[RMDB]
RNA sequence: GGGAACGACUCGAGUAGAGUCGAAAAUACGGGUUCGACGACGCUGUGGUGCUCCCGAGGAGGGCUAGCCUGGAGCCACCCGCACCCAUAGCGAACGCGACGGCCAGGAUAGGCACCGUGCUCCUGCGCUCUAUUGUCAAUUCGUUGACAAUAGAGCAAAAGAAACAACAACAACAAC
Reactivity to 2A3 in 0.01 (KOAc 150mM, MgCl2 10mM, bicine 150mM(pH8.5), 24C), signal-to-noise 5, nucleotides 027 to 126: u150a010c010g000g030g070u080u080c030g110a150c010g000a020c010g160c010u020g020u040g040g040u070g030c040u090c080c070c050g040a200g010g020a090g040g030g000c020u030a050g040c010c040u060g070g070a000g000c020c000a020c020c020c000g010c020a020c010c040c010a010u030a000g000c020g040a180a060c030g000c010g020a040c040g030g000c010c010a090g200g090a180u230a190g040g000c010a010c010c000g010u020g000c020u020c020c010u050g030c060
Reactivity to DMS in 0.01 (KOAc 150mM, MgCl2 10mM, bicine 150mM(pH8.5), 24C), signal-to-noise 6, nucleotides 027 to 126: u010a040c060g000g010g020u000u010c010g010a170c000g020a300c050g010c010u000g020u000g010g010u000g020c070u000c110c080c090g010a150g010g010a200g010g000g000c050u000a060g010c040c030u000g010g010a080g010c020c010a050c020c000c010g060c080a070c070c030c020a040u000a020g010c020g020a050a100c130g000c070g010a040c070g000g000c020c010a130g010g010a120u000a080g010g000c010a300c050c020g000u000g000c050u010c000c000u000g020c190
Overview: This 177-nucleotide RNA was probed chemically with 2A3 and DMS. Conditions: 150 mM KOAc, 10 mM MgCl2 and 150 mM bicine (pH 8.5), 24 C. Values cover nucleotides 27 to 126.